[RMDB]
RNA sequence: GGGAACGACUCGAGUAGAGUCGAAAACAGUUUUCGAACUGAACUAGUCCUAAGUCAGCAAUGAAGGGAGGCGAUGAAACAGAGAGCUCGGAAACGAGCUCGACGAAGUGGAGCCUCCUCAAAGUGCUGAUAUGGAAGCCACGCGAUUCGUCGCGAAAUCAAUUUCCAUGUUCGCAUGGAAAUUGAUAAAAGAAACAACAACAACAAC
Reactivity to 2A3 in 0.01 (KOAc 150mM, MgCl2 10mM, bicine 150mM(pH8.5), 24C), signal-to-noise 4, nucleotides 027 to 156: c010a000g000u030u040u120u150c170g110a040a010c000u020g010a050a030c040u050a080g130u020c000c000u030a110a030g020u000c000a000g000c020a040a120u120g060a180a110g000g000g020a000g010g010c030g230a300u060g030a050a050a000c000a000g010a000g000a000g030c000u000c000g010g030a030a070a060c000g000a000g000c000u000c000g050a030c010g010a030a030g020u020g000g040a010g000c000c000u000c000c000u000c000a000a010a010g020u010g000c000u000g000a000u000a020u030g000g000a040a000g040c030c030a060c050g000c000g010a020u040u080c170g040u020c020g090c000g040a270a100
Reactivity to DMS in 0.01 (KOAc 150mM, MgCl2 10mM, bicine 150mM(pH8.5), 24C), signal-to-noise 2, nucleotides 027 to 156: c020a020g000u000u000u000u010c090g010a060a150c030u000g030a120a160c030u000a080g010u000c020c000u000a060a180g020u000c020a080g000c000a090a060u010g000a300a140g000g010g040a060g000g040c000g010a100u000g020a160a150a130c030a090g030a300g040a000g030c000u000c010g010g000a090a110a290c020g000a010g050c000u000c000g030a080c080g000a080a190g000u000g000g000a240g030c000c000u000c000c020u000c030a020a200a060g020u000g000c010u000g000a010u000a300u000g010g020a020a130g000c030c050a030c020g010c010g000a230u000u010c180g070u000c010g040c000g010a010a140

Structure probing data (2A3 and DMS) for a 207-nucleotide construct.
DMS adducts were read by reverse transcription with MarathonRT.
Values are in units of 0.01, from 0 to 300, in steps of 10.
The reactions ran in a buffer of 150 mM KOAc, 10 mM MgCl2 and 150 mM bicine (pH 8.5), at 24 C.
The data come from the RNA Mapping Database (RMDB), library RNAMAK.